Structure probing data (DMS and 2A3) for a 177-nucleotide construct. The reactions ran in a buffer of 150 mM KOAc, 10 mM MgCl2 and 150 mM bicine (pH 8.5), at 24 C. The DMS profile rests on 1,559 reads. Reactivities are given for positions 27 through 126. It was measured as part of the RMDB library OK1LIB.
RNA sequence: GGGAACGACUCGAGUAGAGUCGAAAACGGCCGCGACGACGCCUGGAGAGAAACGCUACCUCGGAGCCAGUCGAAAGCGGCCGUCCGGUGGCGUCGUCUCGUGGAGCGUCACACGUCGAGAACGGACCGACUGGCUGGAUUUCGAUCCAGCCAGUCGAAAAGAAACAACAACAACAAC
Reactivity to DMS in 0.01 (KOAc 150mM, MgCl2 10mM, bicine 150mM(pH8.5), 24C), signal-to-noise 1, nucleotides 027 to 126: c030g000g040c020c020g000c000g000a150c100g000a030c000g030c020c000u040g000g030a130g000a130g020a100a170a050c000g000c000u000a000c000c030u070c100g030g000a130g090c120c090a050g000u000c000g000a020a100a210g000c020g000g000c010c010g040u000c000c090g000g000u000g000g010c010g040u020c110g060u000c000u010c040g040u030g000g030a130g040c000g020u000c000a060c120a090c040g000u050c010g000a090g030a050a140c090g040g000a160c030
Reactivity to 2A3 in 0.01 (KOAc 150mM, MgCl2 10mM, bicine 150mM(pH8.5), 24C), signal-to-noise 2, nucleotides 027 to 126: c030g020g000c000c020g040c030g010a040c020g000a000c000g070c070c060u100g060g110a030g020a010g000a030a150a000c040g070c000u080a140c010c020u110c100g000g000a040g000c010c090a040g040u080c040g090a140a100a040g000c010g010g010c000c000g000u000c000c000g050g020u000g000g000c020g000u030c100g040u000c010u020c050g140u200g040g000a130g010c000g000u000c010a010c010a000c030g090u050c010g040a020g020a140a080c040g000g040a050c050